[RMDB]
RNA sequence: GGGAACGACUCGAGUAGAGUCGAAAACUAGCAAGCAACAAAAAAGACACGCAUGCGGUGGGAAGGUGGCUGCUUCGCGUAUGCGGCUUUGAGCGGCAAUGCUUCCGGGCCAUUACCGACAAGGUAACGCUAAUGAGUCAUUCGUGACUCAUUAGCGAAAAGAAACAACAACAACAAC
Reactivity to 2A3 in 0.01 (KOAc 150mM, MgCl2 10mM, bicine 150mM(pH8.5), 24C), signal-to-noise 6, nucleotides 027 to 126: c030u070a010g030c050a090a000g040c030a020a130c040a060a140a040a050a010a030g110a090c080a040c120g020c010a020u040g000c020g080g010u140g080g110g000a020a030g070g050u110g040g060c030u080g020c000u100u070c030g030c000g040u080a040u140g030c010g020g000c000u050u030u080g030a030g030c020g010g000c000a040a100u070g040c010u070u010c040c000g010g040g000c000c010a030u020u030a000c000c030g070a160c140a130a050g010g000u050a060a020
Reactivity to DMS in 0.01 (KOAc 150mM, MgCl2 10mM, bicine 150mM(pH8.5), 24C), signal-to-noise 3, nucleotides 027 to 126: c060u010a040g040c080a060a100g010c000a060a090c090a000a050a090a010a060a030g010a070c120a120c020g000c010a020u000g010c030g030g010u020g040g010g000a050a030g000g010u000g000g000c050u000g000c020u030u010c010g000c000g000u010a040u010g000c020g000g000c060u000u010u030g000a150g010c300g000g020c030a010a040u010g030c040u000u000c060c020g000g000g010c050c080a060u020u000a010c010c010g000a060c170a100a150g000g010u000a020a140
Annotation
Structure probing data (2A3 and DMS) for a 177-nucleotide construct. Values cover nucleotides 27 to 126. The reactions ran in a buffer of 150 mM KOAc, 10 mM MgCl2 and 150 mM bicine (pH 8.5), at 24 C. For 2A3 the reverse transcriptase was SuperScript II with manganese. The 2A3 profile rests on 5,363 reads. The DMS profile rests on 4,546 reads. It was measured as part of the RMDB library OK1LIB.